[RMDB]
RNA sequence: GGGAACGACUCGAGUAGAGUCGAAAACAGAAAGAUUGGGAAUCCUUGAAGAUUUCCACUGAACUCAGCCAAUCCGAAAAGGAUGUCAUGGCCGAGGUGUCUGAUUUUAUUCAAGGUCUUAGCGAUAUCCCAUACUCACGUUCGCGUGAGUAUGGGAAAAAGAAACAACAACAACAAC
Reactivity to DMS in 0.01 (KOAc 150mM, MgCl2 10mM, bicine 150mM(pH8.5), 24C), signal-to-noise 1, nucleotides 027 to 126: c010a050g000a160a070a070g010a140u000u000g010g000g010a060a030u030c010c030u000u010g000a090a160g010a030u010u030u010c010c120a100c070u020g000a140a130c000u000c000a010g000c000c010a080a030u000c000c010g000a140a040a130a200g000g000a010u000g010u010c200a140u000g010g010c030c010g010a050g020g020u000g020u000c020u000g000a030u000u020u000u000a090u020u000c060a030a020g050g010u010c090u000u010a140g010c180g000a090u000a070
About this RNA: The record gives the reactivity of an RNA of 177 nucleotides to DMS. For DMS, 729 sequencing reads were counted. It was measured as part of the RMDB library OK2TST. DMS adducts were read by reverse transcription with MarathonRT.